[RMDB]
Description: Chemical mapping of a 177-nucleotide RNA with DMS and 2A3.
RNA sequence: GGGAACGACUCGAGUAGAGUCGAAAAUGCCGAGUUCGAGGAUCGAGCUGCCACCGAUCCACUGGAGUUGAAGGCCAAGGAGCACGACCUCAACUACGUCAAGCUGGACGGUCAGGUGGGGAUCAUCGUAGUGUCAAUCGUUCGCGAUUGACACUACAAAAGAAACAACAACAACAAC
Reactivity to DMS in 0.01 (KOAc 150mM, MgCl2 10mM, bicine 150mM(pH8.5), 24C), signal-to-noise 2, nucleotides 027 to 126: u000g010c030c030g000a110g020u000u000c030g000a080g020g000a030u000c010g020a130g000c010u010g000c010c040a100c000c000g000a150u000c000c020a060c050u010g010g000a040g010u000u000g000a070a080g000g030c020c040a090a130g000g010a110g010c060a150c110g010a010c000c000u000c010a010a010c000u000a070c150g010u010c100a090a040g020c200u000g000g020a060c010g000g010u010c090a060g030g020u000g000g020g000g000a060u000c070a060u000c100
Reactivity to 2A3 in 0.01 (KOAc 150mM, MgCl2 10mM, bicine 150mM(pH8.5), 24C), signal-to-noise 3, nucleotides 027 to 126: u100g080c010c010g060a050g050u070u120c050g020a050g060g010a060u020c000g010a040g120c020u010g080c030c010a030c000c020g050a230u000c000c020a020c070u030g050g040a030g030u000u020g070a150a030g030g000c050c020a070a050g140g000a130g080c030a030c130g030a070c000c010u000c000a010a010c030u120a140c030g140u130c050a090a010g030c140u060g000g020a020c010g000g080u080c070a080g010g030u020g010g030g020g000a010u030c020a030u080c070

DMS adducts were read by reverse transcription with MarathonRT. For 2A3, 2,466 sequencing reads were counted.